[RMDB]
RNA sequence: GGGAACGACUCGAGUAGAGUCGAAAAUCACGCGAGGCGCGAUAAGCCCAAUCGGAGAAGACAACGGAAAGUUCAUUUACCUGGUAUCUGGUUAUGCAGAUGCGUGGAAAUGCCAUUACUUCACUGGCGCGCAUGUCUGGUGCUGCUGGUCGCCGGAUCCUACGCUCACAUUCGUGUGAGCGUAGGAAAAAGAAACAACAACAACAAC
Reactivity to 2A3 in 0.01 (KOAc 150mM, MgCl2 10mM, bicine 150mM(pH8.5), 24C), signal-to-noise 1, nucleotides 027 to 156: u070c000a000c050g020c030g110a080g070g000c020g000c040g030a060u040a100a060g050c000c010c020a010a050u080c060g040g000a040g000a140a000g060a040c020a070a070c060g000g080a060a040a000g050u060u110c020a050u000u000u190a180c020c020u230g040g040u090a040u020c000u030g000g000u050u080a020u160g040c060a020g000a040u030g000c010g010u090g000g030a030a110a030u070g030c000c000a060u140u250a120c030u100u130c090a000c220u040g020g000c030g020c000g000c080a010u150g050u040c030u070g110g000u040g050c010u030g000c020u000g100g020u000c000g000c070c010g000g030a020